[RMDB]
RNA sequence: GGGAACGACUCGAGUAGAGUCGAAAAAUGGCUUCAGGGUGGGGGUUUCUUAGCCAGUCUGCGCUUUGAGGGCUCAAGCGACGAAAUGUUGCUCAAUCUGAGAUACAGUGCUAAGGAUUUUUUAAGGGUGUAGAAGGUAGUUCGCUACCUUCUACACAAAAGAAACAACAACAACAAC
Reactivity to 2A3 in 0.01 (KOAc 150mM, MgCl2 10mM, bicine 150mM(pH8.5), 24C), signal-to-noise 1, nucleotides 027 to 126: a000u030g030g000c000u060u060c040a000g020g060g000u120g030g020g000g000g050u050u040u000c010u000u030a010g060c010c010a010g000u000c000u050g000c010g000c030u060u070u050g030a040g000g000g030c010u030c080a030a000g000c030g050a020c020g000a260a050a050u280g010u030u080g030c010u030c010a140a120u040c090u080g050a040g000a040u030a030c050a030g030u020g140c010u040a030a020g040g000a030u090u000u040u050u040u240a110a000g180g040
Reactivity to DMS in 0.01 (KOAc 150mM, MgCl2 10mM, bicine 150mM(pH8.5), 24C), signal-to-noise 2, nucleotides 027 to 126: a070u010g010g000c090u000u000c100a080g000g000g040u010g000g020g010g000g000u010u000u000c020u010u000a000g000c030c060a130g000u010c030u000g020c090g000c060u000u010u020g000a140g000g000g020c060u010c130a060a050g010c020g000a040c040g010a060a100a130u010g010u000u000g020c020u000c050a060a100u010c110u000g000a070g000a140u000a060c080a040g010u000g000c040u010a030a080g010g000a020u000u000u010u000u000u000a070a150g020g010